[RMDB]
RNA sequence: GGGAACGACUCGAGUAGAGUCGAAAAUUGUUGGUUCGCCGGAGAUCCUUCUCGAGAAUUCGCCUUUUCUUCCUUUCUUCCACCCACUGCUCGAGGAUCUCCUCCCUCCCCUUCGAGGAUUCCCCUGUGCGUAGAGACUUCGGUCUCUACAAAAGAAACAACAACAACAAC
Reactivity to 2A3 in 0.01 (KOAc 150mM, MgCl2 10mM, bicine 150mM(pH8.5), 24C), signal-to-noise 9, nucleotides 027 to 129: u050u030g020u000u040g020g020u060u040c040g040c050c030g030g000a030g000a030u020c020c030u080u070c070u020c050g040a050g030a060a100u150u100c060g070c020c020u050u070u060u040c040u050u060c020c010u050u070u030c010u020u020c020c010a050c010c000c020a060c030u070g000c000u020c010g010a020g010g010a030u000c010u020c010c000u040c010c000c000u000c000c010c000c000u020u040c020g030a030g020g010a050u010u030c010c000c000c020u070g050u060g070c020
Reactivity to DMS in 0.01 (KOAc 150mM, MgCl2 10mM, bicine 150mM(pH8.5), 24C), signal-to-noise 5, nucleotides 027 to 129: u010u010g000u010u000g020g020u060u010c000g010c050c070g080g000a040g000a060u030c020c070u020u030c060u030c060g000a060g000a150a130u040u040c110g050c010c020u000u010u010u010c060u030u030c040c040u000u000u000c010u010u020c000c000a060c070c010c000a110c060u030g020c030u020c000g030a050g020g010a110u010c060u020c000c000u010c000c000c000u030c000c000c000c000u000u030c050g010a080g000g000a300u020u010c000c000c000c000u020g020u010g000c110